[RMDB]
Structure probing data (DMS) for a 177-nucleotide construct. DMS (dimethyl sulfate) methylates the pairing face of unpaired adenines and cytosines. For DMS the reverse transcriptase was MarathonRT. The RNA was probed in 150 mM KOAc, 10 mM MgCl2 and 150 mM bicine (pH 8.5) at 24 C. Source: RMDB library TTRINS, as collected in RNAgym.
RNA sequence: GGGAACGACUCGAGUAGAGUCGAAAAGAUAUGGAGACGCUACCCACCGCUAGAACUACAGCACGCGUACCAUUAGUCGGAAACGACUAAUGGUACGCGAGCUGCUAGCGAGGCGUCUCCUAAGUCACAAUUCCAUAACCUUCGGGUUAUGGAAUUGAAAAGAAACAACAACAACAAC
Reactivity to DMS in 0.01 (KOAc 150mM, MgCl2 10mM, bicine 150mM(pH8.5), 24C), signal-to-noise 1, nucleotides 027 to 126: g010a130u010a210u000g010g020a080g000a030c000g030c010u000a140c040c000c030a300c120c010g000c000u070a010g020a030a050c180u010a300c010a030g040c010a080c000g020c000g020u000a040c010c010a070u000u030a000g040u000c000g000g000a040a040a270c000g000a060c010u000a010a000u000g000g030u000a020c000g040c000g030a000g020c000u000g010c000u000a000g000c010g000a040g030g000c000g000u000c000u000c000c000u010a030a130g000u010c200a120